Source information: This 177-nucleotide RNA was probed chemically with DMS and 2A3. For 2A3 the reverse transcriptase was SuperScript II with manganese. The data come from the RNA Mapping Database (RMDB), libraries RFM100 and RFMREP. The RNA was probed in 150 mM KOAc, 10 mM MgCl2 and 150 mM bicine (pH 8.5) at 24 C. Reactivities are given for positions 27 through 126.
RNA sequence: GGGAACGACUCGAGUAGAGUCGAAAAUCAAUCUGGUAGUGGUGCAAACACUAGUUGUAAGGCCCACGAAGGAUGCCCAGAAGGUACCCGCAGGUAACAAGAGACACUGUGGAUCUGAUCUGGGGCCUUUCGAACGCAUGUUCGCAUGCGUUCGAAAAAAAGAAACAACAACAACAAC
Reactivity to DMS in 0.01 (KOAc 150mM, MgCl2 10mM, bicine 150mM(pH8.5), 24C), signal-to-noise 3, nucleotides 027 to 126: u020c080a100a010u000c040u000g010g010u060a170g000u000g010g010u060g000c030a070a110a100c010a050c050u030a130g020u050u010g020u000a110a140g010g020c010c000c000a010c010g050a240a210g010g000a020u000g020c000c000c000a020g050a090a300g000g000u000a070c070c000c010g000c000a000g000g020u020a000a010c000a050a060g000a180g020a140c300a000c010u000g010u000g010g000a010u020c010u020g020a090u010c020u000g000g000g000g000c010c020
Reactivity to 2A3 in 0.01 (KOAc 150mM, MgCl2 10mM, bicine 150mM(pH8.5), 24C), signal-to-noise 2, nucleotides 027 to 126: u100c040a000a010u000c000u020g020g040u000a040g000u020g010g030u280g090c040a090a130a020c040a010c030u090a110g080u160u040g000u050a070a100g080g010c000c000c000a010c000g000a000a000g000g000a000u030g070c000c010c000a000g010a030a010g010g020u060a060c010c000c000g000c000a000g040g020u080a010a010c020a090a210g020a000g000a000c000a000c000u000g000u000g010g010a000u000c000u030g040a160u000c000u010g000g020g020g000c000c000